[RMDB]
RNA sequence: GGGAACGACUCGAGUAGAGUCGAAAAUAUGGGAAGUAUGUGGAGCCUGCUUACUUCAUAGACCUGAGUGUGGGGAGGAAUCCCAAAUUUGCCUUUUUCCUCGCGUGCAUCUUGAAUGAGAUGGGCCCCGUGUACGUCUUUUCGAAGACGUACACGGAAAAGAAACAACAACAACAAC
Reactivity to 2A3 in 0.01 (KOAc 150mM, MgCl2 10mM, bicine 150mM(pH8.5), 24C), signal-to-noise 1, nucleotides 027 to 126: u200a060u060g000g010g010a050a030g050u080a040u100g000u110g070g010a030g100c000c000u090g110c000u110u040a020c000u030u030c020a020u150a130g080a090c070c060u030g030a080g070u090g010u060g000g010g000g010a020g000g000a050a130u030c050c000c000a010a060a010u090u060u100g090c010c000u000u090u010u040u010c010c000u040c010g000c040g000u060g000c000a030u010c000u090u130g160a300a160u260g020a070g000a030u020g000g070g050c000c010
Reactivity to DMS in 0.01 (KOAc 150mM, MgCl2 10mM, bicine 150mM(pH8.5), 24C), signal-to-noise 1, nucleotides 027 to 126: u000a080u000g020g000g000a050a070g010u000a050u010g030u000g010g000a030g010c010c010u000g000c030u000u000a010c070u000u000c060a040u010a160g000a120c240c130u000g030a100g010u000g000u010g010g020g000g000a060g000g000a060a070u000c000c000c010a030a090a080u000u000u000g010c020c010u030u000u000u000u000c000c000u000c190g040c150g040u010g000c000a020u010c010u000u000g000a090a120u010g000a020g020a080u000g000g000g040c010c130